[RMDB]
Structure probing data (2A3 and DMS) for a 177-nucleotide construct. The DMS profile rests on 777 reads. For 2A3 the reverse transcriptase was SuperScript II with manganese. The 2A3 profile rests on 1,249 reads. Source: RMDB library OK2TST, as collected in RNAgym. DMS adducts were read by reverse transcription with MarathonRT. Conditions: 150 mM KOAc, 10 mM MgCl2 and 150 mM bicine (pH 8.5), 24 C.
RNA sequence: GGGAACGACUCGAGUAGAGUCGAAAAUGUACCCAACUUCACGGUGCUGGACCCCCGCAUUUCCGCCAAGUGGGCACGAAGAGACCAGCAGCAAGCGAGCUUGUGAGGGAAGGCAUUCAGGGAGAUGGUACUGCGUACCGUUCGCGGUACGCAGUACAAAAGAAACAACAACAACAAC
Reactivity to 2A3 in 0.01 (KOAc 150mM, MgCl2 10mM, bicine 150mM(pH8.5), 24C), signal-to-noise 1, nucleotides 027 to 126: u090g010u090a120c000c020c000a020a040c010u050u040c040a020c120g040g000u030g000c010u030g090g270a150c010c010c000c000c000g000c020a080u020u030u020c010c010g000c010c020a130a020g030u100g040g020g000c070a020c090g030a060a030g090a040g040a080c000c020a020g060c020a010g020c000a020a010g070c020g090a020g040c030u070u020g020u050g030a050g000g000g000a000a020g020g000c040a040u140u110c050a050g070g000g020a020g020a040u040g070
Reactivity to DMS in 0.01 (KOAc 150mM, MgCl2 10mM, bicine 150mM(pH8.5), 24C), signal-to-noise 2, nucleotides 027 to 126: u000g020u010a150c010c000c030a080a120c080u020u000c070a120c110g030g020u000g000c020u010g000g000a300c060c010c010c030c010g030c110a070u000u010u000c010c030g030c050c120a070a100g050u000g030g010g070c060a050c030g000a000a140g030a240g000a190c010c000a040g000c030a110g010c110a100a130g080c040g040a080g010c070u000u000g020u000g000a030g000g000g020a130a120g000g040c050a040u000u010c040a040g010g000g000a040g000a120u020g000